[RMDB]
RNA sequence: GGGAACGACUCGAGUAGAGUCGAAAAGGGGUCUAACUAGAAUUAGCAUUGGCUUUUGACGAGCUGAAGCCUCCACGGCUCGAUAAGCCAAUGAACUACUAAUUCGGUUAGACGGAGGCACCCAAAAGGAGCUAUUCUGUUCGCAGAAUAGCUCCAAGUAUAUAUUACUGUUCGCAGUAAUAUAUACAAAAGAAACAACAACAACAAC
Reactivity to DMS in 0.01 (KOAc 150mM, MgCl2 10mM, bicine 150mM(pH8.5), 24C), signal-to-noise 1, nucleotides 027 to 156: g000g040g030g020u000c000u040a010a020c040u010a130g060a040a020u000u000a020g010c020a090u000u000g020g000c000u000u000u000u000g010a300c150g000a080g000c000u000g000a040a130g080c060c020u000c030c040a300c090g010g000c000u000c000g010a130u010a040a050g020c010c000a000a030u010g000a060a140c050u010a230c010u000a000a030u000u000c010g000g000u000u000a030g030a030c010g000g010a030g030g030c020a130c040c010c050a050a090a140a130g040g020a010g010c010u000a000u000u000c000u000g010u000u010c220g050c000a020g020a030a020u000a010g010c010u000c010c000a010a040
Reactivity to 2A3 in 0.01 (KOAc 150mM, MgCl2 10mM, bicine 150mM(pH8.5), 24C), signal-to-noise 3, nucleotides 027 to 156: g020g010g010g020u010c010u010a000a000c020u070a200g030a000a020u010u000a000g020c010a000u000u000g020g000c040u150u230u200u190g120a090c050g000a000g000c000u010g030a130a010g000c010c000u010c020c010a020c000g000g000c000u010c010g030a050u050a270a000g000c010c000a000a010u010g000a010a010c010u170a020c000u000a050a000u000u000c010g000g000u000u000a000g010a000c020g000g000a010g010g000c010a020c010c010c000a040a040a010a070g010g010a010g000c000u000a000u000u000c000u000g040u040u120c240g000c090a010g000a000a000u000a000g000c000u000c000c000a000a000
This 207-nucleotide RNA was probed chemically with DMS and 2A3. 2A3 adducts were read by reverse transcription with SuperScript II with manganese. In probing experiments dimethyl sulfate is read out at A N1 and C N3, which are open when not base-paired. Reactivities are given for positions 27 through 156. DMS adducts were read by reverse transcription with MarathonRT. The reactions ran in a buffer of 150 mM KOAc, 10 mM MgCl2 and 150 mM bicine (pH 8.5), at 24 C. Source: RMDB library RNAMAK, as collected in RNAgym.